[RMDB]
RNA sequence: GGGAACGACUCGAGUAGAGUCGAAAAGAACGAGGGGGACGGUCCUUGGACCUCAGGGGGCCCAUGGAGCCGUGGGAAUCCCCAGACCUCCCUUCUCCACACUCCUUCCCCCCUGCGGGGCCCCCCCAUACUAUCAUGUUCGCAUGAUAGAAAAGAAACAACAACAACAAC
Reactivity to 2A3 in 0.01 (KOAc 150mM, MgCl2 10mM, bicine 150mM(pH8.5), 24C), signal-to-noise 9, nucleotides 027 to 129: g040a060a030c110g010a100g000g010g000g010g020a020c090g030g000u010c010c020u100u190g120g050a080c010c020u040c030a020g030g000g000g010g020c000c000c000a010u020g030g100a090g120c090c030g010u010g000g010g010a020a130u160c000c000c000c010a000g020a010c000c000u010c000c000c000u110u060c010u010c010c010a060c000a020c050u050c010c000u040u130c010c000c010c000c010c020u070g030c160g030g000g000g020c000c000c000c000c000c000c000a020u040a050
Reactivity to DMS in 0.01 (KOAc 150mM, MgCl2 10mM, bicine 150mM(pH8.5), 24C), signal-to-noise 9, nucleotides 027 to 129: g030a050a080c170g020a080g010g030g020g030g000a090c100g040g010u000c010c070u000u060g020g000a040c010c020u000c060a090g010g010g000g010g010c060c000c030a030u000g010g010a110g000c120c040g020u040g030g010g000a070a090u070c040c010c030c030a060g000a110c060c010u020c010c000c010u010u040c020u030c020c090a110c120a170c060u020c030c040u010u070c020c010c010c020c020c050u040g030c100g010g010g000g010c000c000c000c000c010c010c010a020u000a080